[RMDB]
RNA sequence: GGGAACGACUCGAGUAGAGUCGAAAAGAAGACGUGACGAAAAGUCACGAAAAGAGCUGCUAGGUACCGGCAGCAAAGAAAAGGUACCAAGACGGAAACGUCAGACAUCGGAGACGAUGUCAAAAGAAAAUCGAGCAUCAUUCGUGAUGCUCGAUUUAAAAGAAACAACAACAACAAC
Reactivity to 2A3 in 0.01 (KOAc 150mM, MgCl2 10mM, bicine 150mM(pH8.5), 24C), signal-to-noise 2, nucleotides 027 to 126: g170a040a030g100a020c000g000u010g010a000c000g080a020a250a000a090g030u010c030a000c010g020a020a040a000a000g140a010g010c000u010g000c000u050a090g010g000u000a000c000c000g000g000c010a000g000c050a000a050a000g060a000a000a000a000g000g000u000a000c010c000a000a010g000a000c010g000g000a040a150a000c000g010u010c000a000g000a000c000a000u000c000g030g000a020g040a070c010g000a010u010g000u000c000a000a050a090a000g060a000
Reactivity to DMS in 0.01 (KOAc 150mM, MgCl2 10mM, bicine 150mM(pH8.5), 24C), signal-to-noise 2, nucleotides 027 to 126: g000a170a240g010a080c000g020u010g000a010c000g000a170a070a110a280g000u000c000a010c030g000a030a040a120a150g040a240g010c060u000g010c000u000a110g000g000u010a000c000c000g000g050c000a020g020c010a030a010a170g000a080a050a010a130g000g020u000a000c020c000a170a070g000a000c030g000g000a020a070a100c010g010u000c020a200g020a000c000a000u000c020g050g000a300g000a230c000g000a000u000g000u010c030a030a000a070a030g030a110
Source information:
The data come from the RNA Mapping Database (RMDB), library OK1LIB. Chemical mapping of a 177-nucleotide RNA with 2A3 and DMS.